[RMDB]
RNA sequence: GGGAACGACUCGAGUAGAGUCGAAAACGCGUAGCUACGUAGCGCAUUAAUCGUAUAUAUACGGCGCAUUAAUCGUAAUGCUAGCAUAUCGGCAUCGUAUACGAUGCUACGCGGCCGUAGCAUUACGGAGACAUGACCCGUUCGCGGGUCAUGUCUCAAAAGAAACAACAACAACAAC
Reactivity to DMS in 0.01 (KOAc 150mM, MgCl2 10mM, bicine 150mM(pH8.5), 24C), signal-to-noise 1, nucleotides 027 to 126: c050g030c010g080u000a000g020c080u010a260c090g030u000a040g000c040g040c090a120u000u030a090a060u020c030g000u020a060u000a100u000a170u000a050c080g000g000c030g000c090a090u000u010a110a060u030c090g020u000a000a010u000g020c010u000a150g020c160a100u000a050u000c140g030g000c070a050u010c120g020u000a090u000a030c020g010a300u000g000c060u010a050c000g010c130g060g000c030c080g000u000a000g010c070a020u000u000a010c040g000
Reactivity to 2A3 in 0.01 (KOAc 150mM, MgCl2 10mM, bicine 150mM(pH8.5), 24C), signal-to-noise 1, nucleotides 027 to 126: c020g030c000g020u040a020g000c060u140a050c020g090u070a060g000c020g000c000a010u050u190a070a060u060c040g000u020a070u000a000u000a020u010a190c070g060g000c000g000c010a020u040u220a000a090u110c030g030u050a000a000u000g020c050u020a060g070c060a110u080a100u240c070g000g010c000a010u020c070g020u150a040u010a180c040g000a000u060g000c000u000a000c000g000c000g000g040c000c000g090u030a040g000c040a020u080u060a000c000g000
Record summary
An RNA of 177 nucleotides, treated with DMS and 2A3 and read out base by base. For 2A3, 1,344 sequencing reads were counted. For DMS, 784 sequencing reads were counted. Reactivities are given for positions 27 through 126. Reactivities are rounded to 0.1 and cut off at 0 and 3.